[RMDB]
RNA sequence: GGGAACGACUCGAGUAGAGUCGAAAAUUGUUUAACAAGGACUGAUAGAGGAUGGUAUUGUGAUAAUGCAGGAUCAGUAUCCUUCUUUCCACAGGCUGACACUUGUAAAGUACAGUCCAAUCGAGUAAGUAAUACCAUGCUUCGGCAUGGUAUUACUAAAAGAAACAACAACAACAAC
Reactivity to DMS in 0.01 (KOAc 150mM, MgCl2 10mM, bicine 150mM(pH8.5), 24C), signal-to-noise 3, nucleotides 027 to 126: u000u010g000u000u000u000a130a130c170a090a070g000g000a090c020u000g000a210u010a090g000a070g000g010a040u000g020g010u000a030u000u000g020u000g010a120u010a080a080u020g010c120a100g000g010a070u020c070a050g000u010a100u000c010c000u000u000c040u000u000u000c090c050a040c100a040g000g000c060u000g020a060c210a050c010u000u000g000u020a100a080a110g030u010a100c030a030g010u010c030c060a060a100u010c030g000a090g000u000a020
Reactivity to 2A3 in 0.01 (KOAc 150mM, MgCl2 10mM, bicine 150mM(pH8.5), 24C), signal-to-noise 1, nucleotides 027 to 126: u020u030g030u030u080u070a100a000c090a120a070g030g000a010c010u000g020a020u030a150g030a000g070g020a030u090g050g020u030a250u120u080g030u010g030a080u050a170a050u140g020c030a030g010g010a010u040c000a030g060u110a040u020c000c000u000u020c000u040u020u020c000c010a000c050a030g040g020c030u050g070a020c040a030c100u060u030g090u170a150a130a000g020u030a040c030a010g050u050c000c050a030a090u010c000g000a010g070u020a010
This 177-nucleotide RNA was probed chemically with DMS and 2A3. DMS adducts were read by reverse transcription with MarathonRT. The RNA was probed in 150 mM KOAc, 10 mM MgCl2 and 150 mM bicine (pH 8.5) at 24 C. For 2A3 the reverse transcriptase was SuperScript II with manganese.